[RMDB]
RNA sequence: GGGAACGACUCGAGUAGAGUCGAAAAGAUAAGCUAGCAGCAAAAAGGAACCGAUUCCCACCAAGUUCGGAAAGAGAUACCGGGCGAGGCGCUGAAGAAAGAAUCUCGCUUCAGACUCCCCAAGGACAUGACCUUAAAAUGUUCGCAUUUUAAGGAAACGACAGUAUGUGUUCGCACAUACUGUCGUAAAAGAAACAACAACAACAAC
Reactivity to DMS in 0.01 (KOAc 150mM, MgCl2 10mM, bicine 150mM(pH8.5), 24C), signal-to-noise 1, nucleotides 027 to 156: g000a110u020a000a100g020c120u020a160g020c020a190g010c000a010a090a100a080a120g050g060a120a180c040c050g010a190u000u000c010c000c000a220c020c020a040a240g000u000u000c030g010g010a100a080a110g010a050g010a100u000a110c000c060g000g000g030c060g030a090g000g000c180g020c040u010g000a060a080g000a100a090a110g010a100a150u000c070u000c020g010c020u020u000c000a070g010a110c020u000c020c010c020c000a120a240g040g010a040c050a100u000g000a190c000c010u000u000a000a040a000a000u000g000u000u000c270g020c020a010u010u000u000u000a010a000g000g010a040a050
Reactivity to 2A3 in 0.01 (KOAc 150mM, MgCl2 10mM, bicine 150mM(pH8.5), 24C), signal-to-noise 2, nucleotides 027 to 156: g060a050u120a130a030g000c040u050a020g030c070a000g000c030a040a010a070a100a080g060g010a070a010c070c000g080a080u030u020c000c000c020a010c030c040a030a030g050u090u040c020g040g030a130a080a000g120a030g000a020u080a110c030c030g000g000g010c050g000a010g060g010c140g020c040u030g030a010a000g020a030a280a040g080a130a160u070c090u060c180g030c000u030u020c000a010g000a070c000u000c010c010c010c020a010a110g030g010a030c050a120u180g080a050c000c010u000u000a000a000a000a000u010g010u040u050c130g030c120a000u000u000u010u000a000a000g000g000a040a050

This 207-nucleotide RNA was probed chemically with DMS and 2A3.
The data come from the RNA Mapping Database (RMDB), library M2RFPK.
The reactions ran in a buffer of 150 mM KOAc, 10 mM MgCl2 and 150 mM bicine (pH 8.5), at 24 C.
In probing experiments dimethyl sulfate is read out at A N1 and C N3, which are open when not base-paired.
The DMS profile rests on 1,390 reads.
For 2A3, 1,370 sequencing reads were counted.